[RMDB]
RNA sequence: GGGAACGACUCGAGUAGAGUCGAAAAUGGGUUCCCUGGCAGCGCUGCAACGGAAUUCAGGGCGUUGGCCCCGAUGGAGUUACCGAUGAGCACCGGUGAGAAGAGACUGUCUCGCAGACUAGAAGUCGGUAUGAACUAAGUUCGCUUAGUUCAUACCAAAAGAAACAACAACAACAAC
Reactivity to 2A3 in 0.01 (KOAc 150mM, MgCl2 10mM, bicine 150mM(pH8.5), 24C), signal-to-noise 3, nucleotides 027 to 126: u100g100g050g010u010u010c020c000c000u010g080g010c080a090g130c020g000c100u050g000c010a010a040c030g010g080a030a020u100u050c030a040g020g000g010c040g070u100u170g220g000c010c010c000c010g040a030u090g070g020a070g020u040u050a060c000c010g030a080u080g090a020g010c040a020c030c010g030g010u020g000a050g000a070a020g030a010g020a040c030u040g030u040c010u010c030g000c000a010g010a080c020u050a030g060a230a020g080u060c060
Reactivity to DMS in 0.01 (KOAc 150mM, MgCl2 10mM, bicine 150mM(pH8.5), 24C), signal-to-noise 5, nucleotides 027 to 126: u020g010g010g000u000u000c010c000c010u010g010g020c070a070g010c080g000c030u000g010c040a050a070c070g000g010a200a090u000u010c020a080g010g000g010c030g030u010u010g010g010c010c000c010c060g020a060u000g000g020a240g010u000u000a050c030c020g020a080u010g000a110g020c100a120c080c010g010g010u000g000a060g000a060a070g000a100g010a090c050u010g000u000c010u000c030g000c050a070g000a100c040u010a100g010a060a090g010u000c060
Structure probing data (2A3 and DMS) for a 177-nucleotide construct. The 2A3 profile rests on 4,388 reads. For 2A3 the reverse transcriptase was SuperScript II with manganese.